[RMDB]
RNA sequence: GGGAACGACUCGAGUAGAGUCGAAAACGACCUUAAACAGUUCUGGUGGUGCUCUGAAUGGAGUGCUCUACUGAGAUUAUAAAAUAGAAGGUAAGCUAUUAUCUCUUACAUCAGGGCAGGGCUUGUUAAAAGCCUUUCAGUUUCGACUGAAAGGCAACAAGAUGAGCGGAUUCGUCCGCUCAUCUUGAAAAGAAACAACAACAACAAC
Reactivity to 2A3 in 0.01 (KOAc 150mM, MgCl2 10mM, bicine 150mM(pH8.5), 24C), signal-to-noise 1, nucleotides 027 to 156: c020g000a000c050c000u110u230a150a070a020c070a080g010u050u030c020u090g100g000u030g080g000u030g040c000u010c000u030g210a210a140u270g000g070a010g040u070g010c060u030c060u060a030c020u010g000a020g010a070u110u130a090u300a130a090a130a060u160a060g070a080a030g110g010u050a010a030g080c000u020a040u120u070a050u130c000u000c000u000u060a060c020a070u030c020a060g040g000g000c030a040g000g000g060c030u110u040g020u150u030a130a060a090a000g000c020c000u000u000u000c000a000g000u030u100u190c140g050a010c000u000g000a000a000a000g000g000c000a000a000
Chemical mapping of a 207-nucleotide RNA with 2A3. 2A3 adducts were read by reverse transcription with SuperScript II with manganese.